[RMDB]
Structure probing data (DMS and 2A3) for a 177-nucleotide construct. The 2A3 profile rests on 23,982 reads.

RNA sequence: GGGAACGACUCGAGUAGAGUCGAAAACGAAUGGAGUUCGCUCCAUUCGAAAUCCCAGGGAACGACUCGAGUAGAGUCGUAAAUCCCACUCAACUCAACUCAAAAGCGAAUGCUUCGGCAUUCGCAACCUGGUUAUAAAGUUCGCUUUAUAACCAGGAAAAGAAACAACAACAACAAC
Reactivity to DMS in 0.01 (KOAc 150mM, MgCl2 10mM, bicine 150mM(pH8.5), 24C), signal-to-noise 3, nucleotides 027 to 126: c010g020a000a010u000g000g000a020g020u010u010c260g010c000u000c000c000a000u010u000c000g010a030a070a140u000c000c000c000a110g010g010g010a050a060c000g010a010c000u000c000g000a120g000u000a120g000a010g000u000c000g010u000a010a060a120u010c000c010c010a140c120u000c150a080a060c140u010c110a110a060c130u020c100a050a060a090a080g000c000g000a020a020u000g000c000u000u000c180g040g000c010a010u000u000c010g010c000a010a020
Reactivity to 2A3 in 0.01 (KOAc 150mM, MgCl2 10mM, bicine 150mM(pH8.5), 24C), signal-to-noise 6, nucleotides 027 to 126: c000g000a010a000u010g000g010a000g020u060u080c120g110c080u010c000c000a000u000u000c000g000a020a000a000u010c000c000c010a020g010g010g000a030a020c000g000a000c000u000c010g020a040g110u180a030g110a000g000u010c000g000u280a000a010a000u010c000c000c010a020c020u060c010a030a110c020u040c110a020a050c020u040c150a070a060a070a010g000c000g000a000a000u010g010c000u040u060c210g070g000c000a000u000u000c000g000c000a000a000

The RNA was probed in 150 mM KOAc, 10 mM MgCl2 and 150 mM bicine (pH 8.5) at 24 C.